Source: RMDB library OK1LIB, as collected in RNAgym.
Structure probing data (2A3) for a 177-nucleotide construct.
Values cover nucleotides 27 to 126.

RNA sequence: GGGAACGACUCGAGUAGAGUCGAAAAUUUCUUGUUUUUGGCUUGAUUUUAGAUAUAUGUUUGCAGCUAUCGUAUCUAUAAAUCUAUCUACAUCUUCUAUAUCAGCUAAAGAUAUUAAUAUUUCUGGAGCACGUACGUAUUUCGAUACGUACGUGCUAAAAGAAACAACAACAACAAC
Reactivity to 2A3 in 0.01 (KOAc 150mM, MgCl2 10mM, bicine 150mM(pH8.5), 24C), signal-to-noise 2, nucleotides 027 to 126: u000u000u050c000u030u160g020u000u000u000u000u010g000g000c020u050u090g040a000u130u120u000u000a040g000a080u050a000u020a000u130g070u020u160u110g060c030a020g090c060u220a090u170c080g060u040a020u060c030u060a170u270a060a040a210u110c010u090a180u050c030u060a040c030a020u000c020u040u000c030u020a040u060a000u070c010a000g040c010u030a000a060a000g020a010u000a000u190u130a090a160u140a070u140u050u070c080u000g000g040